RNA sequence: GGGAACGACUCGAGUAGAGUCGAAAAAACAGACGCCCAUCAUGCAGUAGGGCGCCCUGGGCUGGGCGGAAGGAAAGGAGGUCCGCGUAUGGAUGUCGUCCAGACGCAGAAAGACGGCGGCCAGAGGGAGUAGGCCGAUAUUCGUAUCGGCCUACUCAAAAGAAACAACAACAACAAC
Reactivity to DMS in 0.01 (KOAc 150mM, MgCl2 10mM, bicine 150mM(pH8.5), 24C), signal-to-noise 2, nucleotides 027 to 126: a080a030c080a140g010a220c030g050c010c000c030a130u020c160a150u020g000c020a070g020u010a090g020g030g000c040g010c020c000c050u010g000g000g000c080u010g010g000g070c040g000g030a120a000g000g000a080a050a030g010g000a140g000g020u010c030c030g100c080g010u000a050u020g000g000a030u000g020u010c110g000u000c040c050a030g000a020c080g000c110a130g000a120a030a030g000a110c120g000g010c040g010g040c030c050a070g020a070g000g020
Reactivity to 2A3 in 0.01 (KOAc 150mM, MgCl2 10mM, bicine 150mM(pH8.5), 24C), signal-to-noise 3, nucleotides 027 to 126: a030a000c130a000g060a040c010g010c000c020c000a010u060c030a020u200g160c000a040g050u250a140g050g010g000c000g000c000c030c030u030g000g070g000c040u060g030g020g000c050g030g040a060a020g060g050a090a100a110g070g040a010g000g080u010c010c030g000c020g050u050a060u100g000g000a030u050g030u240c070g010u000c010c010a000g030a040c020g000c040a000g120a020a160a010g040a000c010g030g000c000g000g060c030c010a040g010a080g050g090